[RMDB]
RNA sequence: GGGAACGACUCGAGUAGAGUCGAAAACUUCCGGAGCUCCUUCUCGAGUUCCUCCUUUCUUCUUCUUCCAUCGAUCCACUUCCCGAGUGUCUCUUCUCUCCCCUUCCGGGGUCUCCUCGGAUCGGUUUGGCUCAUCCUCGAAGAGGGCGGACGGUCCGUUUCAAAUAAGGUUCGCCUUAUUUGAAACAAAAGAAACAACAACAACAAC
Reactivity to 2A3 in 0.01 (KOAc 150mM, MgCl2 10mM, bicine 150mM(pH8.5), 24C), signal-to-noise 2, nucleotides 027 to 156: c040u170u080c060c020g050g020a030g020c030u030c010c010u230u230c100u060c070g000a040g040u060u050c010c020u060c020c020u130u150u110c010u090u030c010u100u000c010u070u050c050c020a090u050c050g060a060u040c030c000a040c040u090u060c000c010c010g020a080g050u050g040u000c010u010c000u120u120c020u030c010u040c040c020c010c010u010u080c020c010g010g000g000g040u030c110u110c030c010u020c010g030g000a000u040c000g030g010u020u050u050g010g010c010u040c010a100u010c040c000u030c020g040a090a060g020a030g000g000g010c000g020g010a010c010g020g010u000c040c060
Structure probing data (2A3) for a 207-nucleotide construct. For 2A3 the reverse transcriptase was SuperScript II with manganese. Reactivities are given for positions 27 through 156.